[RMDB]
RNA sequence: GGGAACGACUCGAGUAGAGUCGAAAAGAUAUGGAUAAGAUUCGAGCAUGAACUACAGCCGCCCGAGCACUCGGAAACGAGUGAACUACUCGUAACAAGCUGCAUGCUCGAAUCUUAUCCUAAGUCAGUUACGGUAAUGGUUCGCCAUUACCGUAACAAAAGAAACAACAACAACAAC
Reactivity to DMS in 0.01 (KOAc 150mM, MgCl2 10mM, bicine 150mM(pH8.5), 24C), signal-to-noise 2, nucleotides 027 to 126: g020a010u000a300u010g010g000a000u000a020a020g000a010u010u000c000g000a020g000c000a010u000g020a100a070c030u000a300c050a020g020c010c150g030c300c270c030g050a010g020c020a060c030u020c000g030g000a100a130a160c030g000a020g010u000g000a100a030c080u020a300c030u000c090g010u000a050a190c300a110a040g000c020u000g000c020a010u010g000c010u010c000g010a000a000u000c010u020u000a010u000c030c010u000a000a000g010u000c080a100